The record gives the reactivity of an RNA of 177 nucleotides to DMS and 2A3. The RNA was probed in 150 mM KOAc, 10 mM MgCl2 and 150 mM bicine (pH 8.5) at 24 C. Values are in units of 0.01, from 0 to 300, in steps of 10. High 2A3 reactivity points to a flexible backbone, as in loops and unpaired stretches. For 2A3 the reverse transcriptase was SuperScript II with manganese. It was measured as part of the RMDB library TTRDEL. For DMS, 17,785 sequencing reads were counted.
RNA sequence: GGGAACGACUCGAGUAGAGUCGAAAAGAUAUGGACUUAUCGUGACAGCUGAUGACCUCGGAAACGAGCAAGGCUGACACGAGUAAGUCCUAAGUCAAACGUACUAUCGCUUCGGCGAUAGUACGAAUCAUUUACACAUGUUCGCAUGUGUAAAUGAAAAAGAAACAACAACAACAAC
Reactivity to DMS in 0.01 (KOAc 150mM, MgCl2 10mM, bicine 150mM(pH8.5), 24C), signal-to-noise 9, nucleotides 027 to 126: g000a040u000a300u010g000g000a020c000u000u000a010u000c010g020u000g000a140c000a010g000c000u010g000a100u020g000a070c300c010u000c000g000g000a110a110a180c010g010a020g000c030a060a110g000g010c000u000g010a070c000a000c000g000a020g020u000a000a010g010u000c000c000u000a020a060g010u000c030a080a100a260c010g000u000a010c000u000a000u000c000g010c000u000u000c240g020g000c010g000a000u000a000g000u000a000c000g000a030a070
Reactivity to 2A3 in 0.01 (KOAc 150mM, MgCl2 10mM, bicine 150mM(pH8.5), 24C), signal-to-noise 8, nucleotides 027 to 126: g030a010u090a050u180g000g000a000c000u010u010a010u030c000g010u010g020a030c000a010g030c020u030g060a300u180g050a220c030c010u010c010g010g040a100a080a050c010g010a010g010c020a060a170g010g010c000u000g020a020c000a000c000g010a010g010u020a010a000g000u000c000c000u000a060a010g050u010c050a120a030a050c010g010u000a000c000u000a000u010c000g000c030u060u080c300g160g000c000g000a000u000a000g000u000a000c000g000a000a000